[RMDB]
RNA sequence: GGGAACGACUCGAGUAGAGUCGAAAAACGGUGCUCAACUAGCUGCGUAAGUAGCUUUUUGUUACACCAUCUAGCGGUACGCCGCUAGCGGUUUUUAACAAGGUGCCAGUACCGCGUUAACGACUGUCACUUAGAACUGGAUCGCAGUGAAGCCUGCCAUAACGAGCAACUUCGGUUGCUCGUUAUGAAAAGAAACAACAACAACAAC
Reactivity to 2A3 in 0.01 (KOAc 150mM, MgCl2 10mM, bicine 150mM(pH8.5), 24C), signal-to-noise 3, nucleotides 027 to 156: a000c050g010g010u020g010c020u000c030a000a020c000u000a000g000c000u020g000c040g100u160a200a270g000u020a050g000c000u000u000u000u000u000g020u040u100a020c000a000c000c000a000u030c000u010a000g010c000g000g040u040a030c170g020c070c010g000c000u000a000g000c010g020g010u010u000u010u000u040a020a000c010a010a010g000g000u000g020c010c000a000g000u010a030c000c010g000c010g000u010u000a010a010c030g020a010c010u020g020u150c050a040c200u100u240a010g020a020a010c000u000g010g020a030u090c050g000c010a010g000u040g120a070a020g040c010c000u000g010c000
Reactivity to DMS in 0.01 (KOAc 150mM, MgCl2 10mM, bicine 150mM(pH8.5), 24C), signal-to-noise 1, nucleotides 027 to 156: a080c060g030g030u000g000c020u030c020a000a000c010u000a050g030c030u000g040c030g000u030a170a180g020u010a010g020c010u010u020u000u000u000g000u000u010a030c050a010c020c010a100u010c040u000a020g000c000g000g000u000a160c250g070c000c020g000c000u000a020g000c080g020g010u000u000u000u000u000a020a070c050a120a080g000g010u000g020c010c090a100g010u000a050c010c040g010c300g100u000u000a050a060c000g000a030c000u000g000u010c070a090c080u000u000a140g050a060a140c050u010g000g030a110u000c060g000c090a080g020u010g000a100a090g000c090c020u000g030c110